[RMDB]
RNA sequence: GGGAACGACUCGAGUAGAGUCGAAAAUGAUGGUGGGUGGAGAGGAUGUGUAGGAUGGUGAUCUGAAUGUUUCCACUUCCAAAAGUAGACCACUAGGGUGUCACUGAAAGGUUUACAGAACUUUGUGUCACAUGCAGCAUUUAACCCAAAAUAUCCAUAGCAUUAUGGGUUUCGACCCAUAAUGCUAAAAAGAAACAACAACAACAAC
Reactivity to DMS in 0.01 (KOAc 150mM, MgCl2 10mM, bicine 150mM(pH8.5), 24C), signal-to-noise 2, nucleotides 027 to 156: u020g010a080u000g020g020u010g010g000g030u010g020g010a170g000a180g010g020a050u020g020u020g070u000a190g010g000a070u000g000g020u000g010a080u020c000u000g020a090a060u020g000u020u000u010c040c030a120c090u020u000c050c090a080a020a090a220g020u000a080g010a050c140c000a050c060u000a300g010g010g010u000g030u000c010a090c000u010g010a070a130a070g040g030u010u010u010a170c100a140g010a030a050c020u010u000u000g010u000g010u000c050a050c060a090u000g010c040a060g000c000a110u000u000u000a100a140c020c000c000a050a040a080a120u000a090u000c000c040a240
Reactivity to 2A3 in 0.01 (KOAc 150mM, MgCl2 10mM, bicine 150mM(pH8.5), 24C), signal-to-noise 2, nucleotides 027 to 156: u190g020a030u120g000g000u070g020g070g030u060g000g030a060g010a010g030g010a060u050g040u030g020u070a030g000g060a000u050g040g060u030g050a030u010c020u090g020a130a050u080g030u010u060u000c010c010a050c010u090u000c010c000a000a150a100a030g010u040a030g020a030c010c040a030c070u060a010g030g060g000u060g050u020c040a040c040u020g000a010a000a080g030g010u040u020u060a070c040a070g060a040a010c020u030u050u160g020u010g010u070c020a000c010a040u110g020c020a020g020c000a020u090u110u160a100a100c040c010c070a040a130a000a030u260a030u150c060c160a020
Source: RMDB library OK3TST, as collected in RNAgym. An RNA of 207 nucleotides, treated with DMS and 2A3 and read out base by base. For 2A3, 1,068 sequencing reads were counted. 2A3 adducts were read by reverse transcription with SuperScript II with manganese. The DMS profile rests on 2,316 reads. Conditions: 150 mM KOAc, 10 mM MgCl2 and 150 mM bicine (pH 8.5), 24 C. For DMS the reverse transcriptase was MarathonRT.